[RMDB]
RNA sequence: GGGAACGACUCGAGUAGAGUCGAAAACGAUUGACUCACUCUCUAAUCGGGUUGGAAGUGACGUUCAAAUUGAAGGUGAAAUUGUUGAAGCAAGACAAACCGGUGGUCCAACAGUCUUCGAGCUUCGAGAUGAGUCAGGGACUGUUGAGUGUGCAGCCCACCUCUGUUCAUUCGUGAACAGAGGUGGAAAAGAAACAACAACAACAAC
Reactivity to 2A3 in 0.01 (KOAc 150mM, MgCl2 10mM, bicine 150mM(pH8.5), 24C), signal-to-noise 1, nucleotides 027 to 156: c030g100a110u020u060g010a000c000u000c050a030c010u100c030u000c010u030a010a010u140c070g050g030g100u050u080g030g000a040a040g040u070g080a030c080g030u090u050c110a070a080a110u110u190g030a090a000g050g010u030g060a040a110a110u030u110g040u040u140g050a110a010g050c060a050a000g050a110c010a010a040a040c030c010g040g080u090g020g020u080c050c090a050a010c010a070g000u000c000u130u200c140g030a050g050c000u070u050c010g160a190g000a110u240g010a020g000u000c040a070g000g000g010a000c000u040g000u040u000g000a050g050u100g030u070g000c050a010g050c000